This 177-nucleotide RNA was probed chemically with DMS.
RNA sequence: GGGAACGACUCGAGUAGAGUCGAAAAUUCUGGAAGUGGGAGACCUGCCGCCGGAGGAACGCUCCUCCAUCGAGGCGCAGGUACGCGCCGCAGGCACCAGCAAUUCGGUGGAAAGCGUCCUGACCGAGUCACGAGGGAUAUUCGUAUCCCUCGUGACAAAAGAAACAACAACAACAAC
Reactivity to DMS in 0.01 (KOAc 150mM, MgCl2 10mM, bicine 150mM(pH8.5), 24C), signal-to-noise 2, nucleotides 027 to 126: u010u010c010u000g000g010a150a100g010u000g010g000g030a170g020a020c030c020u000g020c060c080g000c000c020g000g040a300g000g000a090a070c190g020c120u000c070c090u000c030c000a080u000c070g000a030g000g030c210g050c000a050g020g020u000a010c050g030c100g050c020c000g000c050a060g040g000c030a060c030c020a060g000c060a010a300u010u000c070g000g030u000g000g000a050a120a040g000c060g010u000c020c020u010g000a100c020c050g020a120